[RMDB]
RNA sequence: GGGAACGACUCGAGUAGAGUCGAAAAGGCUUGGGUAAAGGCGUCGACUAGUGGUGAACGUCGGCAGGCGAUGACUGUGACCUGUCGGUGUAUUGCAGUCUACCAAAGCGAGGGGCGUGUCUGUUUGCCCGUGCGGAGGGAAACGGCGCAAGCCGAACUAACCAAGUAUGUUCGCAUACUUGGUUAGAAAAGAAACAACAACAACAAC
Reactivity to 2A3 in 0.01 (KOAc 150mM, MgCl2 10mM, bicine 150mM(pH8.5), 24C), signal-to-noise 5, nucleotides 027 to 156: g050g010c020u040u050g100g030g070u200a120a070a050g070g020c030g020u030c020g040a050c030u060a070g060u020g090g040u050g080a110a020c010g010u010c000g000g010c010a000g000g020c010g090a090u130g070a070c060u080g090u100g110a180c000c000u000g010u020c010g000g000u010g020u070a140u020u110g000c010a000g000u000c030u030a040c010c010a020a030a000g030c030g020a110g000g010g000g010c080g020u080g040u080c110u120g100u090u160u110g030c000c000c000g020u060g010c030g000g020a030g040g000g000a020a070a030c020g020g000c030g000c040a020a000g000c000c000g000a030a010
Reactivity to DMS in 0.01 (KOAc 150mM, MgCl2 10mM, bicine 150mM(pH8.5), 24C), signal-to-noise 3, nucleotides 027 to 156: g000g000c010u000u000g040g020g030u010a080a090a130g020g030c050g050u000c020g020a120c050u000a140g020u010g030g020u000g010a090a060c030g020u000c010g020g040c010a040g010g030c000g000a140u000g010a110c090u000g060u010g000a050c000c000u000g040u020c020g010g050u000g030u000a040u000u020g020c020a070g010u000c020u000a260c000c010a020a240a300g010c010g020a150g000g000g000g050c020g000u010g000u000c090u000g000u000u000u000g020c020c010c020g020u000g010c070g030g000a300g000g000g000a070a060a110c020g000g000c000g000c080a060a140g000c010c010g020a070a290